[RMDB]
RNA sequence: GGGAACGACUCGAGUAGAGUCGAAAAAGACCGGAGGCCGGACCGGCCGGACCAAAAUAGAAAAACAAAAAGAAAAACUUAAUCUUCGGAUUAAGAAAAGAAACAACAACAACAAC
Reactivity to 2A3 in 0.01 (KOAc 150mM, MgCl2 10mM, bicine 150mM(pH8.5), 24C), signal-to-noise 2, nucleotides 027 to 095: a000g040a030c000c000g000g040a050g020g020c000c010g010g050a070c000c030g040g230c010c000g010g010a000c000c060a020a040a070a010u210a060g190a040a040a060a010a000c130a040a050a060a030a010g160a030a060a050a010a010c000u000u010a000a010u010c010u040u060c200g120g020a000u020u000a000a010g040a050
Reactivity to DMS in 0.01 (KOAc 150mM, MgCl2 10mM, bicine 150mM(pH8.5), 24C), signal-to-noise 2, nucleotides 027 to 095: a090g000a130c020c000g030g020a190g000g030c060c040g040g020a150c100c020g010g010c020c000g030g030a120c030c010a090a070a080a080u020a070g000a040a040a050a050a090c170a080a030a050a070a070g020a080a060a050a060a090c090u020u000a040a060u050c010u000u070c160g000g040a030u020u020a020a050g000a000
Chemical mapping of a 115-nucleotide RNA with 2A3 and DMS. Conditions: 150 mM KOAc, 10 mM MgCl2 and 150 mM bicine (pH 8.5), 24 C. Reactivities are given for positions 27 through 95.